RNA sequence: GGGAACGACUCGAGUAGAGUCGAAAAGAUAUGGAUUCACACCAGACAUGAUCCCAGCUCGGAAACGAGCUGUGAGAUCAACAGCUGGGUGAAUCCUAAGUCAAAUCCCUGGGUUCGCCCAGGGAAAUCUUACUGCCGAGUUCGCUCGGCAGUAAGAAAAAGAAACAACAACAACAAC
Reactivity to DMS in 0.01 (KOAc 150mM, MgCl2 10mM, bicine 150mM(pH8.5), 24C), signal-to-noise 1, nucleotides 027 to 126: g030a020u010a060u010g000g020a060u000u000c010a060c010a200c020c000a020g000a060c150a250u000g000a000u000c000c000c000a010g020c000u000c020g000g000a040a000a060c010g010a030g030c040u000g000u000g010a170g000a000u000c000a090a040c230a170g030c000u000g000g000g010u000g010a010a000u000c000c000u000a000a030g020u010c040a110a200a180u000c000c000c010u010g000g020g050u000u010c290g020c010c000c000a020g020g020g000a000a000a020
Reactivity to 2A3 in 0.01 (KOAc 150mM, MgCl2 10mM, bicine 150mM(pH8.5), 24C), signal-to-noise 1, nucleotides 027 to 126: g010a020u030a010u000g000g000a000u000u010c040a030c150a190c100c000a030g050a060c060a300u300g000a020u000c050c030c010a000g070c030u000c000g060g000a020a030a030c010g040a010g050c000u010g000u120g030a300g030a000u050c010a010a250c120a120g040c010u020g010g000g010u030g030a000a000u020c000c000u000a000a000g020u020c010a040a080a200u050c040c010c020u000g060g000g080u060u200c300g100c010c000c000a010g000g000g080a060a000a000

Description: Structure probing data (DMS and 2A3) for a 177-nucleotide construct. For DMS, 932 sequencing reads were counted. DMS adducts were read by reverse transcription with MarathonRT. For 2A3, 1,321 sequencing reads were counted. Source: RMDB library TTRDES, as collected in RNAgym. For 2A3 the reverse transcriptase was SuperScript II with manganese.